Conditions: 150 mM KOAc, 10 mM MgCl2 and 150 mM bicine (pH 8.5), 24 C. Structure probing data (2A3 and DMS) for a 177-nucleotide construct. Values cover nucleotides 27 to 126.
RNA sequence: GGGAACGACUCGAGUAGAGUCGAAAAGCUAGAGCGUUGUCGUAUUAGGCCGGAUAUGCGACGUCAGGGCUGCGAAGCGGUCGUUUGAUCCUGACCGGCCUAAGGAUCUUACUGGUGCUCUAGGAAAGGGUUGAUCUGUCUUCGGGCAGGUUAGCCCAAAAGAAACAACAACAACAAC
Reactivity to 2A3 in 0.01 (KOAc 150mM, MgCl2 10mM, bicine 150mM(pH8.5), 24C), signal-to-noise 9, nucleotides 027 to 126: g080c000u000a000g000a000g000c010g040u050u080g100u110c050g020u090a080u030u010a010g010g000c000c010g000g020a080u110a030u300g110c140g040a030c040g050u040c010a010g010g050g000c000u020g000c050g070a110a030g070c050g040g040u010c010g020u040u140u140g030a070u020c000c000u010g010a020c000c000g000g000c000c000u000a000a000g020g020a060u050c040u060u140a070c060u110g080g020u090g010c000u000c000u000a000g010g000a040a060a040
Reactivity to DMS in 0.01 (KOAc 150mM, MgCl2 10mM, bicine 150mM(pH8.5), 24C), signal-to-noise 9, nucleotides 027 to 126: g010c000u000a010g000a010g020c010g020u010u010g010u000c130g010u020a110u000u000a000g000g010c000c000g000g000a100u030a070u020g010c150g010a060c150g010u010c040a050g000g000g010c010u000g000c050g020a120a140g020c050g010g010u000c000g010u020u020u010g000a100u010c020c010u000g010a180c020c000g000g000c010c000u000a000a010g000g000a050u020c090u020u030a100c160u020g010g020u020g010c000u000c000u000a010g010g000a060a090a120